This 207-nucleotide RNA was probed chemically with 2A3 and DMS. For 2A3 the reverse transcriptase was SuperScript II with manganese. Reactivities are rounded to 0.1 and cut off at 0 and 3.
RNA sequence: GGGAACGACUCGAGUAGAGUCGAAAAGUCCUGCCAUGAGACCGCAACGAGAGCAUGUCGCAUCGAAUGGACUCGGGGAGUCGGCAGCUUGCCCCCCGGAUGAGCGCCUAAUGCCGGCAUUCGGGAAAAUAGACUGGAUAGUUCGCUAUCCAGUCAAGAAUUUAUCGGAGUUCGCUCCGAUAAAUUCAAAAGAAACAACAACAACAAC
Reactivity to 2A3 in 0.01 (KOAc 150mM, MgCl2 10mM, bicine 150mM(pH8.5), 24C), signal-to-noise 3, nucleotides 027 to 156: g010u040c000c020u000g000c000c010a110u110g080a010g040a120c030c040g070c090a100a120c070g040a010g000a020g100c040a050u160g090u150c040g020c100a090u140c100g030a040a050u080g020g070a050c000u020c020g010g010g000g000a100g050u070c050g020g000c000a030g050c060u080u220g040c000c000c000c000c000c000g000g000a010u010g010a050g170c040g040c010c070u220a200a070u210g100c140c030g060g070c000a010u010u010c010g020g000g000a060a060a020a010u130a060g010a000c000u000g020g000a000u000a000g020u050u020c110g000c100u000a000u000c000c000a000g000u000c000a000a000
Reactivity to DMS in 0.01 (KOAc 150mM, MgCl2 10mM, bicine 150mM(pH8.5), 24C), signal-to-noise 1, nucleotides 027 to 156: g020u000c030c060u010g000c110c070a160u020g000a130g010a020c000c080g000c010a060a270c060g010a130g020a250g000c030a050u060g010u010c040g020c040a100u000c090g020a170a170u000g030g000a090c010u000c040g010g000g030g000a060g060u010c010g010g040c050a130g000c070u000u000g010c000c020c030c010c000c010g000g000a010u000g040a090g010c090g000c000c050u000a150a080u010g020c020c000g030g010c010a010u010u000c010g000g060g010a100a060a110a050u010a150g000a020c000u000g030g000a070u000a010g030u010u020c300g020c010u000a000u000c000c010a030g000u000c010a020a130